RNA sequence: GGGAACGACUCGAGUAGAGUCGAAAACCAAAAGCAGUAAUGAUGACUGGCUGUGUUCUAAUCGUACUUGGUAUGAUGCCUGGAUUACCUAAACCAGCAUUUUUUUCACUAGGUAUAGGUGCUAUAGCCGGAGUCGUAUAUUCGUAUACGACUCCGGAAAAGAAACAACAACAACAAC
Reactivity to 2A3 in 0.01 (KOAc 150mM, MgCl2 10mM, bicine 150mM(pH8.5), 24C), signal-to-noise 4, nucleotides 027 to 126: c000c000a010a050a070a020g180c080a050g050u200a230a050u200g180a130u150g080a070c050u080g050g100c010u030g030u010g060u110u060c060u110a090a100u070c020g010u000a000c020u010u050g000g020u020a070u080g010a010u010g090c060c010u010g020g030a150u150u100a200c010c010u110a140a090a070c000c000a000g030c000a070u000u030u000u000u000u030u160c050a000c000u000a010g000g000u000a020u050a130g000g020u060g040c090u180a110u150a160g040
Reactivity to DMS in 0.01 (KOAc 150mM, MgCl2 10mM, bicine 150mM(pH8.5), 24C), signal-to-noise 2, nucleotides 027 to 126: c000c000a080a030a110a110g010c010a040g010u000a110a070u010g010a050u000g000a130c020u000g010g020c070u010g010u010g000u030u000c030u020a100a010u020c010g000u000a000c030u000u000g000g000u020a070u030g000a000u000g000c180c080u000g000g000a070u060u040a100c210c110u060a000a070a070c000c000a030g000c000a010u000u000u010u010u070u000u130c130a030c050u000a030g010g050u020a020u000a000g040g060u020g020c130u020a080u000a070g010

Record summary:
The data come from the RNA Mapping Database (RMDB), library OK1LIB. This 177-nucleotide RNA was probed chemically with 2A3 and DMS. DMS adducts were read by reverse transcription with MarathonRT. 2A3 adducts were read by reverse transcription with SuperScript II with manganese. DMS (dimethyl sulfate) methylates the pairing face of unpaired adenines and cytosines.